[RMDB]
RNA sequence: GGGAACGACUCGAGUAGAGUCGAAAACGAUGAAUCAGGUUUUUUCGAAUGGGCUGCACUGCAUGUAUCCCGCUGGGGCAAUGGUCGCGGACGCUUGCUGUUCACCUGGAUAGUGCUGCUUGGUGCAAAGGCAGAUACGAUUCGUCGUAUCUGCCUUAAAAGAAACAACAACAACAAC
Reactivity to DMS in 0.01 (KOAc 150mM, MgCl2 10mM, bicine 150mM(pH8.5), 24C), signal-to-noise 2, nucleotides 027 to 126: c060g000a150u010g000a100a090u010c060a110g010g010u000u000u000u000u010u000c100g020a120a100u000g020g010g030c040u000g000c050a060c060u000g000c060a140u000g010u000a070u000c030c010c050g040c130u000g020g000g000g040c060a060a040u010g010g000u020c060g010c120g000g010a020c090g040c050u000u010g020c020u030g000u010u010c040a070c050c030u000g020g010a050u010a060g000u000g000c050u010g010c040u000u000g000g000u000g000c100a070
Reactivity to 2A3 in 0.01 (KOAc 150mM, MgCl2 10mM, bicine 150mM(pH8.5), 24C), signal-to-noise 1, nucleotides 027 to 126: c040g110a130u110g070a030a110u120c060a020g000g000u010u000u030u030u140u110c040g140a090a010u140g060g030g060c020u040g000c010a040c090u050g040c030a040u000g080u150a180u050c010c020c000g010c060u110g020g020g000g000c030a030a070u100g050g030u000c060g010c070g250g010a030c050g000c110u090u070g020c000u030g010u050u070c010a010c060c020u010g010g000a120u130a060g050u040g030c020u030g000c040u060u050g060g020u050g030c000a130
The record gives the reactivity of an RNA of 177 nucleotides to DMS and 2A3. 2A3 adducts were read by reverse transcription with SuperScript II with manganese. The reactions ran in a buffer of 150 mM KOAc, 10 mM MgCl2 and 150 mM bicine (pH 8.5), at 24 C. For DMS, 1,863 sequencing reads were counted. For 2A3, 719 sequencing reads were counted.